[RMDB]
RNA sequence: GGGAACGACUCGAGUAGAGUCGAAAACAGAAAUUAUAUGUAAGAACCAUAGCAUUUCGCGAUUCAUUGGUAAAUCAAUUUUGAUUCUCUAUUAACCAAUAAUGUGGAACUAUUAACAUGGUUAAAACAAACUGUUUGAAGUCUAGACGCAGCAUGGGUCUUCUAUUUGGUUCGCCAAAUAGAAGACAAAAGAAACAACAACAACAAC
Reactivity to 2A3 in 0.01 (KOAc 150mM, MgCl2 10mM, bicine 150mM(pH8.5), 24C), signal-to-noise 4, nucleotides 027 to 156: c000a000g130a050a160a030u300u130a140u130a080u240g040u120a130a060g040a120a010c000c020a010u020a030g050c040a040u000u030u040c020g000c030g210a180u090u020c080a000u030u030g000g010u030a030a040a030u040c030a060a110u110u120u120u200g010a020u140u010c070u000c010u140a160u230u130a100a020c000c000a010a000u020a010a030u050g000u040g000g000a020a000c020u030a130u210u070a100a050c080a090u030g020g000u020u030a020a060a010a040c030a010a050a040c010u020g050u020u050u120g080a050a000g030u020c010u070a020g010a040c070g010c110a030g010c020a020u050g110g010
Reactivity to DMS in 0.01 (KOAc 150mM, MgCl2 10mM, bicine 150mM(pH8.5), 24C), signal-to-noise 2, nucleotides 027 to 156: c010a120g000a110a170a130u000u010a140u000a060u000g000u000a130a150g000a100a020c020c020a130u000a120g010c090a080u000u000u000c010g000c010g010a100u010u010c080a090u010u000g010g000u000a100a020a050u000c020a060a240u010u000u010u000g020a070u000u000c130u000c140u010a220u000u030a180a020c000c010a010a050u000a050a080u000g010u000g010g020a050a070c060u000a100u000u000a050a050c060a060u000g010g120u010u010a030a080a080a100c030a040a050a090c100u000g020u010u020u010g000a050a090g010u010c050u000a070g010a050c050g010c030a050g030c070a090u000g000g000